[RMDB]
RNA sequence: GGGAACGACUCGAGUAGAGUCGAAAAGAUAUGGACGCACUACCCACCUCGUACCUACUGGGAGACGCUCGUCGGAAACGACGAGAACUACGUCUCCCAGUAGAUACGAGAGGUGCGUCCUAAGUCACUUAAGCGUAGUGUUCGCACUACGCUUAAGAAAAGAAACAACAACAACAAC
Reactivity to DMS in 0.01 (KOAc 150mM, MgCl2 10mM, bicine 150mM(pH8.5), 24C), signal-to-noise 3, nucleotides 027 to 126: g020a090u000a130u000g000g020a010c010g000c000a010c010u000a170c010c010c040a300c120c000u000c000g030u000a010c020c000u010a010c000u000g000g020g010a010g010a000c000g030c020u000c010g000u010c000g000g010a110a130a300c000g000a010c000g000a000g010a030a040c160u000a300c010g000u000c000u000c000c020c000a000g010u020a000g000a010u000a010c000g010a000g000a030g000g000u000g000c000g010u000c000c000u010a010a050g020u000c220a210

Structure probing data (DMS) for a 177-nucleotide construct. The RNA was probed in 150 mM KOAc, 10 mM MgCl2 and 150 mM bicine (pH 8.5) at 24 C. Reactivities are given for positions 27 through 126.